RNA sequence: GGGAACGACUCGAGUAGAGUCGAAAAUAACGCGUCAAAAUGACUGUGAGCUAUGUGGAUUUGACUUCAUAUCACAGCCAUUUUGACGAGUUUGUAAAACACAUAAGCAACUUCGGUUGCUUAUGUGGAUCACAUGUUACUUCGGUAACAUGUGAUCAAAAGAAACAACAACAACAAC
Reactivity to DMS in 0.01 (KOAc 150mM, MgCl2 10mM, bicine 150mM(pH8.5), 24C), signal-to-noise 6, nucleotides 027 to 126: u000a010a000c010g000c010g000u000c000a010a000a010a020u000g010a020c000u000g010u000g000a050g030c300u000a040u010g020u000g000g010a190u010u010u010g010a110c130u000u000c000a010u000a070u000c000a010c010a000g020c010c000a000u000u000u000u000g000a010c000g000a010g010u000u010u000g010u000a060a060a090a300c000a000c000a000u000a000a000g000c000a010a010c000u000u010c190g030g000u000u000g000c000u000u000a000u000g010u000g000
Reactivity to 2A3 in 0.01 (KOAc 150mM, MgCl2 10mM, bicine 150mM(pH8.5), 24C), signal-to-noise 7, nucleotides 027 to 126: u100a010a000c010g000c000g020u000c000a000a000a000a000u010g010a020c010u000g000u000g000a030g040c120u130a040u100g040u040g030g050a100u160u090u300g160a120c000u010u020c020a010u020a010u050c000a000c010a010g000c000c000a000u000u010u000u010g000a000c000g000a000g000u000u010u040g070u070a060a050a030a040c010a000c000a000u000a000a000g000c000a000a000c010u020u110c210g120g000u000u000g000c000u000u000a000u000g000u000g010